[RMDB]
RNA sequence: GGGAACGACUCGAGUAGAGUCGAAAAGAAUACACACCAGACUAUACGGUUAAGUCUUUUGAAGGUCAACCUGCACUGCAAACACAAGAAAUACCGCUCGCAACAAUCUCAGUAUUGUUUGUCAUUAUCGUAGCGACGAUUUCAGCAGUUUGUACUCGUACUGAUAGCGAUUCGUCGCUAUCAGUACAAAAGAAACAACAACAACAAC
Reactivity to 2A3 in 0.01 (KOAc 150mM, MgCl2 10mM, bicine 150mM(pH8.5), 24C), signal-to-noise 8, nucleotides 027 to 156: g030a020a060u200a050c060a010c020a030c060c030a040g040a070c070u090a080u080a220c080g030g030u070u090a080a030g030u040c010u040u130u070u140g130a120a040g050g020u060c030a030a050c020c020u040g040c050a040c060u040g010c040a040a060a030c060a010c030a140a070g020a020a020a000u060a070c020c010g000c020u010c010g030c000a000a010c000a010a020u020c150u060c190a080g060u190a100u010u040g090u040u090u110g070u030c050a050u060u300a130u200c110g090u170a010g000c000g060a080c070g040a030u010u010u020c040a050g010c020a020g030u020u020u010g030u040a070c060u040c130
Reactivity to DMS in 0.01 (KOAc 150mM, MgCl2 10mM, bicine 150mM(pH8.5), 24C), signal-to-noise 2, nucleotides 027 to 156: g010a150a070u010a100c090a300c020a120c040c030a060g000a070c070u000a140u010a110c070g000g010u010u000a090a120g020u010c020u000u010u000u000g020a090a080g040g010u010c030a080a060c010c010u000g000c030a090c100u000g020c050a070a020a060c040a080c090a150a170g000a020a040a070u000a060c060c000g000c030u000c070g040c070a040a050c020a040a020u010c000u000c080a100g030u010a070u000u000g010u010u000u010g060u010c060a060u000u000a070u000c070g020u000a020g010c020g010a040c060g010a080u000u000u000c030a110g000c140a150g010u000u010u010g010u010a090c070u010c030